Chemical mapping of a 207-nucleotide RNA with 2A3.

RNA sequence: GGGAACGACUCGAGUAGAGUCGAAAAGAAAUUACGUUUCCUUUACACUUCUCAAACCGGGAUCAAGAGAAGCAAAGCAUCCCUCAUAUUCACGAUGGAGGGUGUCGUGGAGUAUACUGUACCAAAAAGAGCGAACACGGCUUCGGCCGUGUUCGAAAUUAUGUCUCCACUUCGGUGGAGACAUAAUAAAAGAAACAACAACAACAAC
Reactivity to 2A3 in 0.01 (KOAc 150mM, MgCl2 10mM, bicine 150mM(pH8.5), 24C), signal-to-noise 1, nucleotides 027 to 156: g010a020a110a010u130u090a050c030g000u050u070u000c010c000u010u010u130a020c050a010c020u030u000c020u060c080a110a150a170c110c100g120g050g000a120u070c080a210a000g000a020g000a060a000g000c070a000a110a000g000c000a040u060c010c010c000u000c000a040u030a110u120u060c060a040c150g070a020u070g060g000a020g060g000g020u020g000u020c040g010u030g040g010a030g030u020a020u020a070c020u070g100u130a110c000c080a040a040a000a090a020g040a010g120c030g000a000a010c000a000c000g030g050c030u070u100c160g090g000c000c010g000u000g000u000u000c000g000a000a000
The 2A3 profile rests on 485 reads.
Conditions: 150 mM KOAc, 10 mM MgCl2 and 150 mM bicine (pH 8.5), 24 C.
The data come from the RNA Mapping Database (RMDB), library M2RFPK.